Conditions: 150 mM KOAc, 10 mM MgCl2 and 150 mM bicine (pH 8.5), 24 C. This 207-nucleotide RNA was probed chemically with 2A3.

RNA sequence: GGGAACGACUCGAGUAGAGUCGAAAAGAAACGCAAGGCCGCUGACCGUCGGGAUAUUGUGGGGCUUACCACAGGGGACGCGGCGUUAUCACUUGCCUUUUAAGCCGACCGUCUGGGCUGCAUACAAACCACCCAACUAUCUUCGGAUAGUUGGGAAGAUUCCGGUAACGUUCGCGUUACCGGAAUCAAAAGAAACAACAACAACAAC
Reactivity to 2A3 in 0.01 (KOAc 150mM, MgCl2 10mM, bicine 150mM(pH8.5), 24C), signal-to-noise 1, nucleotides 027 to 156: g000a000a010a000c080g000c090a040a010g050g010c000c020g010c050u050g060a020c000c080g110u070c000g150g000g000a080u050a080u230u050g000u010g040g000g030g090c080u110u080a040c000c000a020c000a060g060g000g000g000a020c030g010c000g100g000c000g000u030u000a020u020c030a020c070u010u020g000c000c000u080u120u000u090a030a000g040c000c000g080a130c040c000g060u090c000u050g000g000g000c000u040g010c020a050u060a110c060a000a100a050c030c000a000c000c000c000a000a000c000u000a000u000c000u020u030c040g080g000a020u000a010g010u000u000g010g000g000a000a020